[RMDB]
RNA sequence: GGGAACGACUCGAGUAGAGUCGAAAAGAUAUGGAGCGUGAACUACUCCCGCCCUCGCGGUCGGAAACGACCGAACUACGAGUAACAAGGAGCACGCUCCUAAGUCAAAACCAAGCUUCGGCUUGGAGGUUGCAUGUACGUUCGCGUACAUGCAACCAAAAGAAACAACAACAACAAC
Reactivity to 2A3 in 0.01 (KOAc 150mM, MgCl2 10mM, bicine 150mM(pH8.5), 24C), signal-to-noise 1, nucleotides 027 to 126: g010a000u020a000u070g020g000a000g000c000g000u030g040a180a080c110u090a110c010u300c020c000c080g140c080c050c000u030c000g020c010g010g010u020c000g000g070a010a030a030c000g030a010c000c010g000a080a010c060u120a050c050g030a000g000u130a300a230c300a300a190g000g000a030g040c020a000c010g010c010u000c010c010u000a020a010g020u000c010a000a000a040a190c000c010a000a000g000c010u090u240c300g110g000c000u000u010g020g020a020
Reactivity to DMS in 0.01 (KOAc 150mM, MgCl2 10mM, bicine 150mM(pH8.5), 24C), signal-to-noise 1, nucleotides 027 to 126: g020a110u000a300u020g000g000a030g000c000g000u000g000a150a060c170u000a300c000u000c000c030c030g000c300c180c000u000c000g000c000g020g020u000c000g000g000a060a120a040c080g020a030c020c000g000a050a020c240u000a300c050g000a000g000u020a030a120c300a140a290g000g000a000g030c020a000c020g000c020u000c000c000u000a000a080g000u050c060a110a000a280a120c000c000a000a000g000c000u000u000c290g020g020c000u000u000g000g000a020
Chemical mapping of a 177-nucleotide RNA with 2A3 and DMS. Values cover nucleotides 27 to 126. Conditions: 150 mM KOAc, 10 mM MgCl2 and 150 mM bicine (pH 8.5), 24 C. The 2A3 profile rests on 1,447 reads. It was measured as part of the RMDB library TTRDES.